[RMDB]
RNA sequence: GGGAACGACUCGAGUAGAGUCGAAAAACUUCCUACUUCGGUAGGAAGUAAAAGUAGAAAAGUUGGUGCUUAGACCACGCCCACUACCGUAAUAAUAGAUAAACCCUUAGCACUUCGGUGCUAAGAACAGUUUGUCUAGUUUCGACUAGACAAACUGAAAAGAAACAACAACAACAAC
Reactivity to 2A3 in 0.01 (KOAc 150mM, MgCl2 10mM, bicine 150mM(pH8.5), 24C), signal-to-noise 2, nucleotides 027 to 126: a000c000u000u010c020c000u010a000c010u040u000c100g050g010u020a000g020g030a010a000g000u000a000a000a000a000g010u040a010g050a020a040a030a010g060u110u030g020g010u070g040c190u170u150a030g060a090c030c000a020c010g020c000c000c030a040c010u020a030c000c040g050u010a060a110u050a110a010u060a250g130a060u140a160a080a080c040c010c000u000u010a000g000c000a000c010u030u060c250g120g010u000g000c000u000a000a000g010a010a010
Reactivity to DMS in 0.01 (KOAc 150mM, MgCl2 10mM, bicine 150mM(pH8.5), 24C), signal-to-noise 2, nucleotides 027 to 126: a040c000u000u020c010c000u000a000c000u000u010c160g000g020u020a020g000g000a000a010g000u000a010a020a060a110g010u000a030g000a060a060a040a040g030u010u000g000g000u000g000c190u040u010a190g000a030c020c020a030c030g040c010c000c010a200c000u000a020c000c100g000u000a090a090u010a030a030u000a100g010a090u000a040a110a100c130c070c020u000u010a000g010c000a010c020u000u000c160g020g010u000g000c000u000a000a000g000a090a170